[RMDB]
RNA sequence: GGGAACGACUCGAGUAGAGUCGAAAAACAGCCAUUUUAUAAAACAGCAUAUGUGCUGAUAUGGAAUGAUUUCCAAGACGUUAUUGUUAAAUGAAAACAUCAAGUUGCAGAACAGGAUGAAUAAUGCGCGACCAUUCUAGCAGGUUAAAUAAGGAAAUCAUUUUAAAUCGUUCGCGAUUUAAAAUGAAAAAGAAACAACAACAACAAC
Reactivity to 2A3 in 0.01 (KOAc 150mM, MgCl2 10mM, bicine 150mM(pH8.5), 24C), signal-to-noise 2, nucleotides 027 to 156: a000c010a000g020c010c000a030u040u010u060u070a200u120a070a160a050a090c050a000g010c030a060u150a060u260g210u120g040c000u020g060a000u020a030u130g030g010a040a060u050g030a060u070u080u000c010c010a070a000g060a040c090g070u150u050a060u110u130g060u020u150a060a150a080u080g070a030a030a040a040c030a000u040c080a090a100g030u050u040g050c020a020g020a080a020c000a030g040g010a060u060g030a010a050u140a120a020u130g020c040g010c000g030a030c000c000a030u000u090c030u040a050g000c010a000g010g000u040u050a040a120a100u090a100a020g060g040a030a140a000
Reactivity to DMS in 0.01 (KOAc 150mM, MgCl2 10mM, bicine 150mM(pH8.5), 24C), signal-to-noise 2, nucleotides 027 to 156: a140c100a090g030c020c000a030u000u020u000u010a030u000a040a090a100a230c000a000g010c000a040u020a080u000g070u000g060c010u010g010a180u000a030u000g030g010a040a050u020g010a090u000u000u000c050c020a080a270g020a170c100g040u000u000a020u010u000g010u020u010a070a120a150u010g010a060a070a060a050c020a030u010c040a060a090g020u000u000g030c040a100g010a120a140c000a050g000g000a090u010g010a040a100u000a060a060u000g030c070g050c020g010a090c040c000a080u000u000c020u000a090g030c050a080g010g020u000u000a030a060a060u030a030a140g000g020a090a080a100
Structure probing data (2A3 and DMS) for a 207-nucleotide construct. For 2A3, 636 sequencing reads were counted. Source: RMDB library OK3TST, as collected in RNAgym.